RNA sequence: GGGAACGACUCGAGUAGAGUCGAAAAAUUAAAUGUUUUCAGCUUUGCAGGCCAUAUAGUCUUUUCUGCAGCUACUCAGCUCGGCUGCUGUAGCUUGAAAGCAGCCAUAGACAAUACAUAUUUGUGGGGAGCAGAAUGUUUUCGAACAUUCUGCUCCAAAAGAAACAACAACAACAAC
Reactivity to 2A3 in 0.01 (KOAc 150mM, MgCl2 10mM, bicine 150mM(pH8.5), 24C), signal-to-noise 2, nucleotides 027 to 126: a000u230u190a040a010a030u150g070u020u020u080u130c060a060g000c000u170u200u170g030c070a110g000g140c020c120a020u150a010u000a230g170u070c000u100u020u030u000c000u000g050c000a030g000c000u010a010c000u000c020a000g060c000u160c260g250g000c000u040g000c000u010g060u040a020g030c000u060u080g120a050a040a010g000c000a000g000c000c000a000u040a000g010a000c000a070a050u090a160c020a080u110a080u090u090u030g100u070g010g070

An RNA of 177 nucleotides, treated with 2A3 and read out base by base.